[RMDB]
RNA sequence: GGGAACGACUCGAGUAGAGUCGAAAAAUACAGUACGAAAGUACAAAGAAGCAAUCAAACCGAGCAGUGAAAUGAUGGCUUCAGUCCAAAAUGGGCAAACACUGGAGACGGAGCCAAAGGCAAAUAAUGAUAUAUAACAGUUCGCUGUUAUAUAUCAAAAAGAAACAACAACAACAAC
Reactivity to 2A3 in 0.01 (KOAc 150mM, MgCl2 10mM, bicine 150mM(pH8.5), 24C), signal-to-noise 3, nucleotides 027 to 126: a000u160a010c050a010g020u010a010c010g020a120a020a020g030u010a010c010a020a080a030g050a040a010g010c040a020a060u060c040a040a050a080c050c020g050a040g050c080a040g060u070g130a060a070a120u090g040a020u050g010g000c000u010u000c010a040g030u000c020c000a030a100a020a210u200g030g010g010c030a060a110a010c050a010c060u040g020g000a050g030a030c060g020g000a010g000c020c000a020a040a010g070g000c040a060a040a060u150a080a070
Reactivity to DMS in 0.01 (KOAc 150mM, MgCl2 10mM, bicine 150mM(pH8.5), 24C), signal-to-noise 6, nucleotides 027 to 126: a060u010a090c120a180g000u010a000c010g000a130a070a130g000u000a000c010a070a080a130g010a050a050g010c050a060a050u000c060a030a090a120c060c060g010a080g010c060a060g020u000g000a070a080a070u000g000a060u000g010g000c000u000u010c010a070g020u010c030c020a030a030a080a090u010g010g000g010c060a080a060a070c110a040c070u000g010g010a110g000a080c070g010g010a050g010c020c020a020a060a090g010g010c060a020a060a070u000a050a100